[RMDB]
RNA sequence: GGGAACGACUCGAGUAGAGUCGAAAAUGAAGGUUCAACGAGAGUCCCACUGUCCCCACAUUCAGCCCCGUGAAAUUAAUGUACUGGUGCACAAUCCAGUCUCUCCCACAUGAAAGCGAAGUCCCCGGAUCUUAUACAACUUCGGUUGUAUAAGAUCAAAAGAAACAACAACAACAAC
Reactivity to DMS in 0.01 (KOAc 150mM, MgCl2 10mM, bicine 150mM(pH8.5), 24C), signal-to-noise 3, nucleotides 027 to 126: u000g010a110a090g000g000u000u000c070a080a060c080g010a130g000a180g020u000c010c020c030a130c070u010g010u000c050c020c000c070a090c070a080u010u010c060a080g010c020c020c000c020g030u010g000a040a090a080u010u020a070a070u010g000u000a030c020u010g010g010u010g010c130a070c220a140a110u020c000c020a040g000u000c020u000c050u000c010c000c000a080c120a080u010g010a080a060a070g010c020g000a070a070g000u000c010c000c000c130g000
Reactivity to 2A3 in 0.01 (KOAc 150mM, MgCl2 10mM, bicine 150mM(pH8.5), 24C), signal-to-noise 1, nucleotides 027 to 126: u070g020a080a010g080g000u040u040c050a020a020c020g040a010g010a020g110u060c010c020c000a030c020u040g130u080c000c050c020c030a000c020a020u120u080c030a030g010c000c000c000c000g020u010g010a080a030a030u110u070a020a040u130g040u060a030c030u010g000g000u010g020c110a030c020a140a060u040c010c000a010g050u020c000u030c000u050c000c080c010a030c010a030u180g050a120a040a000g020c050g010a020a000g040u000c040c000c000c020g010
An RNA of 177 nucleotides, treated with DMS and 2A3 and read out base by base.
The data come from the RNA Mapping Database (RMDB), library RFMREP.